[RMDB]
Conditions: 150 mM KOAc, 10 mM MgCl2 and 150 mM bicine (pH 8.5), 24 C. The record gives the reactivity of an RNA of 177 nucleotides to 2A3 and DMS. It was measured as part of the RMDB library TTRDEL.
RNA sequence: GGGAACGACUCGAGUAGAGUCGAAAAGAUAUGGAUCUGGCGGGAGCGAGGAUCUCGGAAACGAGGGAGCUCUGCCUGGAUCCUAAGUCAAAACGAAGCUGACUGACUUCGGUCAGUCAGCUUCGAAUCGUAUUGGUUAGUUCGCUAACCAAUACGAAAAAGAAACAACAACAACAAC
Reactivity to 2A3 in 0.01 (KOAc 150mM, MgCl2 10mM, bicine 150mM(pH8.5), 24C), signal-to-noise 2, nucleotides 027 to 126: g010a020u080a020u190g010g000a000u000c020u030g050g000c180g170g090g000a030g000c020g050a280g040g000a030u020c010u000c000g030g000a060a140a050c010g000a010g010g010g000a010g000c000u030c010u010g030c000c000u010g060g000a000u030c000c000u020a100a020g030u040c030a060a030a050a140c030g010a010a000g000c000u020g000a010c000u030g000a000c030u070u170c300g050g000u000c020a030g020u000c000a000g020c010u000u000c000g010a000a010
Reactivity to DMS in 0.01 (KOAc 150mM, MgCl2 10mM, bicine 150mM(pH8.5), 24C), signal-to-noise 3, nucleotides 027 to 126: g000a030u010a300u010g000g000a000u000c010u000g010g010c010g000g010g010a030g020c010g010a050g020g000a030u000c000u000c010g000g000a120a090a260c010g000a030g010g000g010a020g000c000u000c000u000g010c030c010u020g000g000a010u010c000c000u000a010a090g010u000c030a070a060a150a220c030g010a010a000g010c000u000g000a010c010u010g000a020c000u000u010c220g020g000u000c000a000g010u000c000a000g000c000u000u000c000g000a030a030
Record summary
For 2A3, 3,033 sequencing reads were counted.